[RMDB]
RNA sequence: GGGAACGACUCGAGUAGAGUCGAAAACAGUGAGAGCUCUUUCCACCACAAGUGACAGAAAAUCCAGCCCAAACUAGCUAAAGCAAAAAGACGCUCUUGCCAUUGGCAAUUUCAACAUUGACUGGAUAUUUGAUGAUAUGAAGGCAAUGCCGUUAAAUAUUAAUGAGGGAUUCGUCCCUCAUUAAUAAAAAGAAACAACAACAACAAC
Reactivity to 2A3 in 0.01 (KOAc 150mM, MgCl2 10mM, bicine 150mM(pH8.5), 24C), signal-to-noise 6, nucleotides 027 to 156: c040a010g030u060g040a050g010a020g020c000u010c010u040u040u020c040c050a070c000c040a090c030a100a040g030u040g080a030c050a070g130a060a130a000a020u050c020c020a020g040c020c020c040a090a080a060c040u070a020g020c030u100a160a030a030g040c030a040a100a060a030a030g030a030c060g020c000u000c010u010u020g020c020c020a140u070u100g040g000c020a040a070u040u120u130c050a080a080c020a050u030u040g100a170c030u010g030g010a020u020a100u100u100u110g080a060u030g010a010u020a050u200g030a040a020g020g000c030a050a040u070g020c030c000g050u070u120a060a120a080
Reactivity to DMS in 0.01 (KOAc 150mM, MgCl2 10mM, bicine 150mM(pH8.5), 24C), signal-to-noise 4, nucleotides 027 to 156: c060a090g020u000g010a060g010a060g030c030u000c030u000u000u000c030c040a100c020c040a090c000a100a120g040u000g020a170c040a140g000a050a050a100a300u000c040c000a070g010c000c020c050a070a070a100c100u000a080g010c040u000a070a100a100g040c040a050a060a070a040a100g010a090c090g020c040u000c040u000u000g010c010c030a190u000u000g010g010c060a060a100u000u000u000c020a050a020c020a030u000u000g020a020c010u000g010g010a060u000a040u000u000u000g020a140u010g010a050u000a030u000g010a090a060g010g020c020a030a040u000g020c010c080g000u000u000a030a060a120
Overview
The data come from the RNA Mapping Database (RMDB), library OK3TST. The record gives the reactivity of an RNA of 207 nucleotides to 2A3 and DMS. The RNA was probed in 150 mM KOAc, 10 mM MgCl2 and 150 mM bicine (pH 8.5) at 24 C. For DMS, 12,380 sequencing reads were counted.